The record gives the reactivity of an RNA of 177 nucleotides to DMS and 2A3. 2A3 adducts were read by reverse transcription with SuperScript II with manganese. It was measured as part of the RMDB library TTRDES.
RNA sequence: GGGAACGACUCGAGUAGAGUCGAAAAAAAAAGAUAUGGAUCCUCAAAUUCAUCGAUCGUUAUUGUUUGGCUAUUCGGAAACGAAUAGCUGAUAAUAACGGGAGAAUUGAGGAUCCUAAGUCAAAAACCUUACCAAUGUGUUCGCACAUUGGUAAGGAAAAGAAACAACAACAACAAC
Reactivity to DMS in 0.01 (KOAc 150mM, MgCl2 10mM, bicine 150mM(pH8.5), 24C), signal-to-noise 1, nucleotides 027 to 126: a070a040a140a130a040g000a020u010a300u000g000g020a020u000c000c000u000c000a020a010a050u030u000c030a240u000c250g010a100u010c000g000u000u000a000u000u000g000u000u010u040g050g020c010u000a000u000u000c000g020g000a150a040a120c020g000a000a000u000a000g000c000u000g010a000u010a000a000u000a010a000c000g020g010g000a110g000a020a060u000u000g010a050g000g000a000u000c000c000u000a010a060g000u000c020a050a120a150a070a170
Reactivity to 2A3 in 0.01 (KOAc 150mM, MgCl2 10mM, bicine 150mM(pH8.5), 24C), signal-to-noise 1, nucleotides 027 to 126: a000a000a050a050a010g050a030u080a050u050g000g000a000u040c000c000u000c020a130a210a270u100u070c060a200u300c110g120a070u030c010g000u000u030a010u010u050g300u140u040u230g000g000c020u000a010u000u000c000g020g030a030a030a060c010g000a000a010u000a020g000c010u000g000a000u010a000a000u000a020a000c000g000g030g000a050g000a000a000u020u010g000a000g040g010a000u000c000c000u000a010a000g000u000c030a000a020a050a170a240
In probing experiments dimethyl sulfate is read out at A N1 and C N3, which are open when not base-paired.
For DMS the reverse transcriptase was MarathonRT.